[RMDB]
RNA sequence: GGGAACGACUCGAGUAGAGUCGAAAAUCGUCCUCGAGUUUCUUGAUGGUUCUCCUGCUCUUCCGGAGCCUUCUUUCGAGGUCUUCCGCGUCUUUUCUUGCUUGGAUCCAUUUCUCGAGGACGUCCUGCCGGGAACCGUUCGCGGUUCCCAAAAGAAACAACAACAACAAC
Reactivity to DMS in 0.01 (KOAc 150mM, MgCl2 10mM, bicine 150mM(pH8.5), 24C), signal-to-noise 5, nucleotides 027 to 129: u070c040g010u050c010c010u030c010g000a070g020u130u130u040c130u110u150g050a000u020g040g050u080u060c080u040c030c040u010g030c040u030c050u130u010c080c000g040g000a120g040c040c010u110u090c060u060u180u100c150g010a030g050g000u030c050u100u010c000c010g070c200g070u060c120u100u090u000u070c130u120u040g010c030u020u070g010g010a060u060c020c000a030u030u080u020c030u020c020g030a000g020g030a040c010g040u030c000c000u010g070c180c050
Reactivity to 2A3 in 0.01 (KOAc 150mM, MgCl2 10mM, bicine 150mM(pH8.5), 24C), signal-to-noise 9, nucleotides 027 to 129: u100c000g000u010c000c010u000c000g000a000g000u080u160u050c150u150u220g040a010u020g010g000u110u050c040u020c070c010u030g020c000u030c010u180u030c030c000g000g020a000g000c020c000u090u060c030u100u260u220c160g010a000g000g020u000c050u100u010c000c000g010c090g060u050c120u050u170u070u030c100u110u070g010c020u040u080g000g010a030u060c000c000a010u030u040u020c000u010c000g000a000g000g000a000c000g000u000c010c000u000g060c040c050